[RMDB]
RNA sequence: GGGAACGACUCGAGUAGAGUCGAAAACCGGACGUCGUUUUGGUGUCUGAUUCGGUAACCGAAUCGGGAGCACCAUCUGCGUAGGCUUGUGGUUUAAGGCUUGCGCCACCUACGGUCUUGGAUAGCCCCAGUAUGUCUACUUCGGUAGACAUACUGGAAAAGAAACAACAACAACAAC
Reactivity to DMS in 0.01 (KOAc 150mM, MgCl2 10mM, bicine 150mM(pH8.5), 24C), signal-to-noise 2, nucleotides 027 to 126: c000c000g010g000a010c090g020u000c060g020u000u000u000u000g030g000u010g010u000c010u010g010a000u000u000c000g010g010u030a180a160c110c000g000a010a010u000c000g000g000g020a090g030c000a020c000c030a020u000c100u000g010c010g000u000a000g000g000c020u000u000g030u020g010g010u010u010u010a150a040g010g000c010u000u010g010c070g010c000c070a010c030c020u000a060c040g010g000u010c030u000u000g040g010a110u000a140g000c030c040
Reactivity to 2A3 in 0.01 (KOAc 150mM, MgCl2 10mM, bicine 150mM(pH8.5), 24C), signal-to-noise 3, nucleotides 027 to 126: c000c000g000g010a020c030g030u090c020g000u050u030u110u110g000g000u010g020u000c010u000g000a020u000u000c010g000g080u250a260a300c160c000g000a000a000u000c020g000g030g010a190g050c020a010c010c010a020u000c020u050g000c020g010u010a000g010g020c010u120u170g060u160g120g170u110u090u210a060a010g030g000c020u020u040g010c030g030c010c020a030c000c000u050a010c030g050g070u050c040u090u300g120g040a130u110a150g040c000c020